The record gives the reactivity of an RNA of 177 nucleotides to 2A3. 2A3 adducts were read by reverse transcription with SuperScript II with manganese. The reactions ran in a buffer of 150 mM KOAc, 10 mM MgCl2 and 150 mM bicine (pH 8.5), at 24 C.
RNA sequence: GGGAACGACUCGAGUAGAGUCGAAAAACAUCGACGGCAAGGUUUGGCACCUCGAUGUCGGCUCAUCGCAUCCUGGGGCUGGAGCAGGUCCCAAGGGUACGGCUGUUCGCCGUUUAAAGCGGUACGCGCGGCUCCUUAUGUUCGCAUAAGGAGCCGCAAAAGAAACAACAACAACAAC
Reactivity to 2A3 in 0.01 (KOAc 150mM, MgCl2 10mM, bicine 150mM(pH8.5), 24C), signal-to-noise 1, nucleotides 027 to 126: a000c030a010u010c010g030a000c000g020g030c070a070a120g230g000u090u090u170g160g040c030a100c060c020u000c000g060a030u070g010u010c020g000g010c010u010c000a000u070c040g000c050a000u000c000c010u040g010g000g010g000c000u100g000g080a080g070c010a090g060g000u030c030c000c030a030a050g000g000g000u010a010c010g000g000c000u060g100u300u050c090g000c000c060g000u020u020u020a040a020a030g030c020g000g000u060a030c020g030c030